[RMDB]
RNA sequence: GGGAACGACUCGAGUAGAGUCGAAAAUGAAGACGUCGACGGCGGCCUUGACACGCUCCUCGGUGGACGAGGUGAGCUCGACGGCCUCGUCGCCCUUCCACGCGAUCUUGGUGUCGGUGCCGCGGAACGCGAUAAAUCAUUUCGAUGAUUUAUCGCGAAAAGAAACAACAACAACAAC
Reactivity to DMS in 0.01 (KOAc 150mM, MgCl2 10mM, bicine 150mM(pH8.5), 24C), signal-to-noise 9, nucleotides 027 to 126: u010g000a060a060g010a080c040g010u000c010g010a040c090g020g010c040g010g010c010c020u000u010g000a040c040a020c030g010c100u000c050c120u000c060g010g020u000g010g000a070c040g000a020g000g020u000g000a110g010c130u000c030g000a080c050g010g000c010c010u000c010g000u000c050g000c020c020c110u000u000c020c020a050c050g010c070g000a030u000c060u010u010g020g020u000g010u000c010g010g000u000g010c010c010g010c030g010g010a070a140
Reactivity to 2A3 in 0.01 (KOAc 150mM, MgCl2 10mM, bicine 150mM(pH8.5), 24C), signal-to-noise 9, nucleotides 027 to 126: u130g030a040a020g130a050c040g010u050c020g020a050c050g140g010c030g010g000c010c010u040u150g000a010c010a000c060g070c030u060c010c010u040c030g040g000u090g100g050a010c020g000a010g000g010u050g060a050g010c040u020c030g030a030c010g010g000c000c000u010c000g030u020c020g030c000c000c000u050u010c020c010a050c020g200c020g040a070u050c050u120u230g180g000u030g010u020c010g000g040u090g000c010c000g010c030g010g030a090a020